[RMDB]
RNA sequence: GGGAACGACUCGAGUAGAGUCGAAAAGGCGUUGUGACGGAGGCUGAAACCUACACUAACUUCGUUGGUUAUGUCACAACCACGUUCAAAAGAAAGCAUUUCCGCCCAACACCAGAUGCAUGUAGAGUGUUGGAGAACCUUUCGAGGUUCUCCAACAAAAAGAAACAACAACAACAAC
Reactivity to 2A3 in 0.01 (KOAc 150mM, MgCl2 10mM, bicine 150mM(pH8.5), 24C), signal-to-noise 4, nucleotides 027 to 126: g070g010c070g000u010u010g040u040g040a040c030g000g030a030g050g000c060u080g020a120a050a040c040c000u090a030c060a020c100u240a220a120c040u120u150c090g020u060u040g000g010u050u110a100u200g130u090c050a040c020a030a000c000c000a030c050g030u100u090c050a080a090a020a030g140a040a070a010g010c040a050u080u070u000c010c010g000c010c000c000a000a010c020a030c020c040a020g040a130u100g040c070a020u130g050u200a060g060a140g150
Reactivity to DMS in 0.01 (KOAc 150mM, MgCl2 10mM, bicine 150mM(pH8.5), 24C), signal-to-noise 2, nucleotides 027 to 126: g010g000c150g000u050u000g010u010g000a020c040g020g000a030g000g030c000u000g000a030a120a140c080c010u020a060c110a110c100u000a060a060c080u030u000c120g050u010u000g000g000u000u000a030u080g000u070c060a040c180a010a030c030c040a160c040g010u010u020c030a140a070a060a040g000a070a150a040g000c060a070u020u060u000c030c000g060c000c010c030a030a000c060a050c040c030a090g020a150u050g000c060a140u000g000u050a070g030a110g000
An RNA of 177 nucleotides, treated with 2A3 and DMS and read out base by base. The DMS profile rests on 2,334 reads. For DMS the reverse transcriptase was MarathonRT. The reactions ran in a buffer of 150 mM KOAc, 10 mM MgCl2 and 150 mM bicine (pH 8.5), at 24 C. Values cover nucleotides 27 to 126. For 2A3 the reverse transcriptase was SuperScript II with manganese.